[RMDB]
RNA sequence: GGGAACGACUCGAGUAGAGUCGAAAAAAAGUGUAAUAGCACAGUUAACAGUGCUAUAUGGCCAGUAGGCAAGCCGGAUGGAUCAUGGAGGCUAACCAUUGAUUAUAGGCCACUCAACUCGGCUGUCUACUACGCUACGGUUCGCCGUAGCGUAGUAAAAAGAAACAACAACAACAAC
Reactivity to DMS in 0.01 (KOAc 150mM, MgCl2 10mM, bicine 150mM(pH8.5), 24C), signal-to-noise 3, nucleotides 027 to 126: a090a040a060g020u000g030u010a100a060u000a020g010c000a000c010a080g000u010u020a080a100c300a080g000u000g000c000u000a000u000a070u010g020g030c020c060a080g030u010a060g000g010c030a060a070g040c000c000g010g020a110u000g010g000a030u000c040a030u000g000g020a140g020g020c260u020a070a090c010c030a060u000u010g020a070u000u000a060u020a100g000g030c010c020a100c080u000c070a080a070c100u000c050g030g020c000u000g000u010c070
Reactivity to 2A3 in 0.01 (KOAc 150mM, MgCl2 10mM, bicine 150mM(pH8.5), 24C), signal-to-noise 1, nucleotides 027 to 126: a010a000a000g190u170g070u070a120a070u000a020g040c010a000c010a040g050u210u170a160a040c040a070g010u070g030c050u010a010u000a000u020g010g000c020c000a010g030u010a010g030g000c080a050a050g030c020c010g130g000a030u110g050g000a050u090c040a050u090g080g020a050g170g090c100u040a070a080c000c010a090u120u090g000a000u000u080a090u070a110g040g010c020c000a040c030u120c030a000a060c010u010c040g010g000c000u000g070u150c010
Conditions: 150 mM KOAc, 10 mM MgCl2 and 150 mM bicine (pH 8.5), 24 C. An RNA of 177 nucleotides, treated with DMS and 2A3 and read out base by base. For DMS the reverse transcriptase was MarathonRT. For 2A3, 834 sequencing reads were counted.